[RMDB]
RNA sequence: GGGAACGACUCGAGUAGAGUCGAAAAAGCGGGCCCUCCGAUCCGAGGGGCCCGACGCCCCUGAUCUGGAGAGCACUCCGGCCCGAAGGGUUGAGUAGCACCCAGAGGGAGGAAAUCACACGGAGAGUAGGUCCACAGUUCGCUGUGGACAAAAGAAACAACAACAACAAC
Reactivity to DMS in 0.01 (KOAc 150mM, MgCl2 10mM, bicine 150mM(pH8.5), 24C), signal-to-noise 7, nucleotides 027 to 129: a100g000c030g020g000g020c010c010c010u020c030c070g020a030u050c070c210g040a070g010g010g030g020c000c020c020g030a000c050g010c050c010c000c020u030g030a090u050c020u030g030g010a080g000a060g030c090a100c070u010c000c000g000g060c010c000c000g010a300a080g020g030g000u070u000g020a150g030u020a130g040c080a040c000c000c000a070g010a300g020g010g020a100g030g000a010a050a030u050c050a080c140a130c070g000g000a030g010a000g040u000a030g030
Reactivity to 2A3 in 0.01 (KOAc 150mM, MgCl2 10mM, bicine 150mM(pH8.5), 24C), signal-to-noise 6, nucleotides 027 to 129: a000g040c030g010g010g000c010c010c000u010c020c030g060a080u060c050c050g080a040g010g020g000g000c020c000c010g000a040c030g000c000c000c000c000u060g040a130u030c010u040g000g010a040g000a010g080c020a040c070u010c020c000g100g020c010c000c010g040a050a050g020g010g000u050u050g070a070g050u190a050g050c040a030c000c000c010a010g030a050g030g000g010a030g010g010a040a060a030u130c050a050c010a030c060g030g000a020g000a030g050u110a040g000